[RMDB]
RNA sequence: GGGAACGACUCGAGUAGAGUCGAAAAGAUAUGGAAAGGAACUACCUAUGGAGAGCGUUGAAACUUUUCGCUAUUCGGAAACGAAUAGCGAAAAGUGGAGCUCUCCCUCUAGGCCUUUCCUAAGUCAGUUGGAGUAUAUGUUCGCAUAUACUCCAACAAAAGAAACAACAACAACAAC
Reactivity to DMS in 0.01 (KOAc 150mM, MgCl2 10mM, bicine 150mM(pH8.5), 24C), signal-to-noise 2, nucleotides 027 to 126: g010a070u010a300u000g010g000a000a010a020g010g000a140a060c090u010a300c000c000u010a010u010g000g000a000g010a030g030c010g020u000u010g000a240a180a020c000u000u000u010u000c000g020c000u000a000u000u010c000g000g010a100a130a300c010g000a000a010u000a020g010c000g000a000a000a000a020g000u000g010g000a170g010c010u000c000u000c000c000c010u020c010u000a010g000g000c000c020u000u000u000c000c010u010a020a060g010u000c080a150